Source: RMDB library OK3TST, as collected in RNAgym. The record gives the reactivity of an RNA of 207 nucleotides to DMS and 2A3. Values cover nucleotides 27 to 156. For DMS, 2,453 sequencing reads were counted.
RNA sequence: GGGAACGACUCGAGUAGAGUCGAAAAAAGCCACCCUGGAACGCUACAAUAAUGACAGCGGCACGUUCCUGACCUACAUGGCCAACCUGUUCCAGACGGUGCUGUCGCUGCAGGACGUCAUUGACGUCUUCCGCGAUAAGAUGGACAUCACGGUUGACCAAACUCCUCUUUUCGAAGAGGAGUUUGGAAAAGAAACAACAACAACAAC
Reactivity to DMS in 0.01 (KOAc 150mM, MgCl2 10mM, bicine 150mM(pH8.5), 24C), signal-to-noise 1, nucleotides 027 to 156: a040a060g030c030c000a150c060c000c030u000g000g010a000a000c030g020c080u020a080c090a170a080u000a080a110u000g050a130c090a050g010c030g000g070c070a160c030g030u000u000c020c000u000g020a160c010c000u000a070c060a130u000g000g000c000c020a030a030c060c040u000g030u000u000c030c000a140g010a070c020g000g000u000g000c020u000g020u010c040g050c010u000g050c020a020g030g010a070c000g000u010c010a300u000u000g000a050c020g020u000c010u000u000c000c110g040c010g000a070u000a080a130g040a140u020g000g010a090c060a040u030c020a010c040g000g000u020u000g000a190
Reactivity to 2A3 in 0.01 (KOAc 150mM, MgCl2 10mM, bicine 150mM(pH8.5), 24C), signal-to-noise 4, nucleotides 027 to 156: a010a000g090c040c020a010c010c000c000u020g000g030a010a000c010g020c050u120a040c080a130a160u220a170a110u210g110a080c030a060g030c070g050g010c050a000c090g040u010u000c000c000u040g120a120c000c010u040a070c060a150u100g010g000c010c010a010a020c050c020u100g040u070u010c030c010a070g020a100c110g000g060u040g040c010u020g000u000c000g000c000u030g030c040a000g000g000a000c000g000u000c150a300u060u300g000a020c000g000u000c000u010u000c000c000g020c000g000a000u040a060a050g020a040u070g010g030a030c010a030u140c080a030c070g040g020u020u040g020a050